[RMDB]
RNA sequence: GGGAACGACUCGAGUAGAGUCGAAAAAUGUGGCAGUAGCGGCAGCCGAUACAGACCUCUUCGUUCACCACCACAAAACCGUCAUCGCGCUUGUGCAUCGCGCCGCUCGGGCAGACUUUGGUACAGGGUAUUUAAUCCAUUUCGAUGGAUUAAAUACAAAAGAAACAACAACAACAAC
Reactivity to DMS in 0.01 (KOAc 150mM, MgCl2 10mM, bicine 150mM(pH8.5), 24C), signal-to-noise 7, nucleotides 027 to 126: a050u030g010u020g000g020c040a080g040u010a080g030c050g010g010c030a080g010c040c020g000a110u030a060c090a070g000a110c050c020u000c020u000u010c040g010u000u010c050a070c010c020a080c060c060a050c120a050a080a080a120c070c040g000u000c070a060u010c070g010c060g000c040u000u030g020u010g000c060a050u010c040g010c030g010c010c020g010c020u000c060g010g010g000c060a070g000a050c040u000u000u000g010g000u020a070c130a080g000g010
Reactivity to 2A3 in 0.01 (KOAc 150mM, MgCl2 10mM, bicine 150mM(pH8.5), 24C), signal-to-noise 9, nucleotides 027 to 126: a000u150g020u090g040g020c040a050g030u130a030g030c010g030g010c020a010g030c020c020g010a020u050a130c030a020g060a080c000c020u040c020u060u040c030g050u020u040c050a080c090c000a030c020c000a050c040a040a090a030a030c030c020g070u060c020a070u060c030g000c010g000c050u060u060g040u050g060c030a050u060c030g000c010g000c040c000g000c000u010c000g020g010g000c010a010g020a090c000u080u110u120g030g010u080a060c050a080g150g000